[RMDB]
Source information: Structure probing data (2A3 and DMS) for a 177-nucleotide construct. The reactions ran in a buffer of 150 mM KOAc, 10 mM MgCl2 and 150 mM bicine (pH 8.5), at 24 C. The 2A3 profile rests on 3,017 reads. Reactivities are rounded to 0.1 and cut off at 0 and 3. As a SHAPE reagent, 2A3 marks flexible, mostly unpaired nucleotides at the ribose 2'-OH. For DMS, 1,379 sequencing reads were counted.
RNA sequence: GGGAACGACUCGAGUAGAGUCGAAAACACAUACAGCCGUGGUGAUGGUACUUUAAGUGGAGGCUGAAUCAUUUCCCCUUUGAGCUGCAUGGCACAUGGCUCCCUUGGUGUUCCCAUUUUACAGCCACCCAUAAGAAGGCUUCGGCCUUCUUAUGGGAAAAGAAACAACAACAACAAC
Reactivity to 2A3 in 0.01 (KOAc 150mM, MgCl2 10mM, bicine 150mM(pH8.5), 24C), signal-to-noise 5, nucleotides 027 to 126: c040a000c010a050u200a080c050a030g010c020c010g040u060g010g060u050g060a080u040g070g090u070a090c040u060u200u160a150a080g050u070g070g020a020g000g040c040u050g070a010a050u100c070a040u030u020u060c000c020c000c000u020u040u130g030a030g000c020u020g010c000a030u070g040g000c030a040c020a160u120g010g010c030u010c020c000c000u010u080g060g000u030g010u020u010c000c010c010a010u090u120u110u140a090c090a020g030c020c000a010
Reactivity to DMS in 0.01 (KOAc 150mM, MgCl2 10mM, bicine 150mM(pH8.5), 24C), signal-to-noise 1, nucleotides 027 to 126: c050a020c070a210u010a050c160a030g000c060c020g000u000g000g000u010g030a120u010g030g010u040a040c070u060u010u090a010a000g140u010g000g020a180g000g020c010u000g000a060a050u020c090a050u000u020u000c010c000c000c040u000u000u000g000a050g000c070u000g000c010a080u000g000g000c040a090c030a080u060g030g030c000u000c010c040c000u000u000g010g030u000g060u000u000c000c010c020a290u000u000u060u020a070c160a000g010c040c050a170